[RMDB]
RNA sequence: GGGAACGACUCGAGUAGAGUCGAAAAGGCUAUGGUUGCAGCUGACGGUCCCAGCAGAGCUCUCUGGCUACAAGCUUGCAGGCGGACAUUUGGGGUCCAGGCUGCAGUGAGACCUGGGGGAGUAUGACCGAUGCAUCAGGUUCGCCUGAUGCAUCGGAAAAGAAACAACAACAACAAC
Reactivity to 2A3 in 0.01 (KOAc 150mM, MgCl2 10mM, bicine 150mM(pH8.5), 24C), signal-to-noise 1, nucleotides 027 to 126: g030g010c030u140a140u220g190g030u090u000g050c000a000g000c000u030g040a060c010g000g050u020c000c060c000a000g030c010a000g010a030g000c000u050c000u000c000u140g010g000c000u120a140c140a080a000g010c000u010u010g050c000a020g000g010c130g000g060a110c100a050u250u050u170g080g000g000g000u010c010c000a050g000g000c000u000g030c090a000g000u020g000a050g030a060c000c000u080g000g000g030g080g000a090g000u110a160u170g090a080
Reactivity to DMS in 0.01 (KOAc 150mM, MgCl2 10mM, bicine 150mM(pH8.5), 24C), signal-to-noise 1, nucleotides 027 to 126: g000g000c000u040a040u060g000g040u020u000g000c080a020g010c030u010g000a080c300g000g000u000c000c000c000a020g000c110a080g000a240g070c000u030c010u000c020u000g000g000c010u000a070c250a120a180g000c000u000u010g000c180a020g000g000c000g000g010a170c300a110u000u000u000g040g000g050g000u000c000c080a300g000g000c000u000g000c000a000g000u020g020a070g000a090c020c000u000g000g000g000g010g000a180g000u040a070u000g000a300

Chemical mapping of a 177-nucleotide RNA with 2A3 and DMS. 2A3 adducts were read by reverse transcription with SuperScript II with manganese. Reactivities are given for positions 27 through 126.